RNA sequence: GGGAACGACUCGAGUAGAGUCGAAAAGUUUGACACGGAUUACGCGUGUAAGUGUAUUCAUCAUAAUGCAAAGUAUGCCGCUUUUGAGAUAGUUAGGCUUGAUGACGCGUUGAAUCACACACCGUUGACACAAUACGUCCUUCGGGACGUAUUGUGUAAAAGAAACAACAACAACAAC
Reactivity to DMS in 0.01 (KOAc 150mM, MgCl2 10mM, bicine 150mM(pH8.5), 24C), signal-to-noise 3, nucleotides 027 to 126: g000u000u020u000g010a090c070a070c080g010g000a240u040u020a050c080g010c090g010u000g010u000a050a080g000u000g000u000a000u000u000c020a070u030c100a180u050a090a030u020g000c020a050a100a160g020u000a060u000g010c000c030g040c040u010u000u010u010g010a170g020a090u000a040g010u000u000a060g040g030c010u000u000g020a070u010g000a150c220g000c040g000u000u000g000a030a020u010c040a020c060a070c070a070c040c050g000u000u000g030
Reactivity to 2A3 in 0.01 (KOAc 150mM, MgCl2 10mM, bicine 150mM(pH8.5), 24C), signal-to-noise 1, nucleotides 027 to 126: g080u020u000u080g050a020c000a020c100g060g030a090u090u150a060c040g060c040g010u050g050u090a020a070g010u030g010u040a030u000u060c010a080u000c020a000u000a250a070u180g010c010a050a000a030g070u010a070u090g020c010c000g150c080u120u040u110u130g170a210g040a060u080a090g010u000u120a050g010g010c040u040u070g070a120u080g030a030c040g000c000g000u010u010g050a020a040u000c020a010c000a010c020a000c030c040g060u100u090g020
The record gives the reactivity of an RNA of 177 nucleotides to DMS and 2A3. The RNA was probed in 150 mM KOAc, 10 mM MgCl2 and 150 mM bicine (pH 8.5) at 24 C. Source: RMDB library OK2TRN, as collected in RNAgym. For 2A3, 1,068 sequencing reads were counted.